[RMDB]
RNA sequence: GGGAACGACUCGAGUAGAGUCGAAAAUUGAAGGUAAAACAGCCUGUGGGUGAAACACACCCACAGGGCCCAUUAGGCGCUAGCACUCUGGUAUCACGGUACCUUUGUGCGCCUGUUUUACCGAAGGGUACUGCGAACUUCGGUUCGCAGAAAAGAAACAACAACAACAAC
Reactivity to 2A3 in 0.01 (KOAc 150mM, MgCl2 10mM, bicine 150mM(pH8.5), 24C), signal-to-noise 2, nucleotides 027 to 129: u110u100g040a020a000g060g000u000a010a000a000a000c010a020g000c000c000u010g020u000g020g000g010u000g020a000a010a000c140a010c010a010c030c020c020a000c000a030g000g030g000c020c000c000a020u150u220a010g000g000c000g010c090u090a060g010c040a000c000u000c020u000g020g000u000a000u020c010a030c210g110g000u000a010c000c000u010u000u000g010u000g000c010g000c020c000u000g000u000u000u000u000a000c000c000g010a000a000g090g020g010u020a030